[RMDB]
RNA sequence: GGGAACGACUCGAGUAGAGUCGAAAAAUCUUAGACUGCCUUACAGAUAGCACACUUACAUCUCAUUGUAAAGUUAUUGUUGAAAGCAUUGCUUGGUUUAAAGUGAAUGUCAGACAAUAUCACAGUGGUACACACCAGGGUUCGCCCUGGUGUGUACAAAAGAAACAACAACAACAAC
Reactivity to 2A3 in 0.01 (KOAc 150mM, MgCl2 10mM, bicine 150mM(pH8.5), 24C), signal-to-noise 2, nucleotides 027 to 126: a000u000c030u030u030a040g040a050c010u050g040c050c010u070u030a110c040a010g030a080u040a080g090c040a030c000a010c070u110u170a060c010a060u060c040u000c010a100u080u050g040u110a100a170a220g000u020u000a030u040u040g040u000u050g080a080a090a000g010c010a000u010u010g010c000u060u070g070g190u290u100u210a070a020a000g010u030g210a040a000u050g040u030c030a000g010a040c000a000a000u000a020u000c050a010c000a080g130u130g030
Reactivity to DMS in 0.01 (KOAc 150mM, MgCl2 10mM, bicine 150mM(pH8.5), 24C), signal-to-noise 1, nucleotides 027 to 126: a090u000c040u000u010a060g000a090c020u010g040c070c030u000u000a060c100a080g020a090u000a050g000c040a050c150a050c130u000u000a030c070a080u000c040u000c050a090u000u000g000u000a030a080a210g000u010u000a020u000u000g010u010u010g000a180a180a180g000c010a020u020u000g000c000u000u010g030g010u000u000u020a020a030a030g050u000g010a000a030u000g010u010c060a300g010a030c020a000a020u000a030u000c020a040c020a040g020u010g000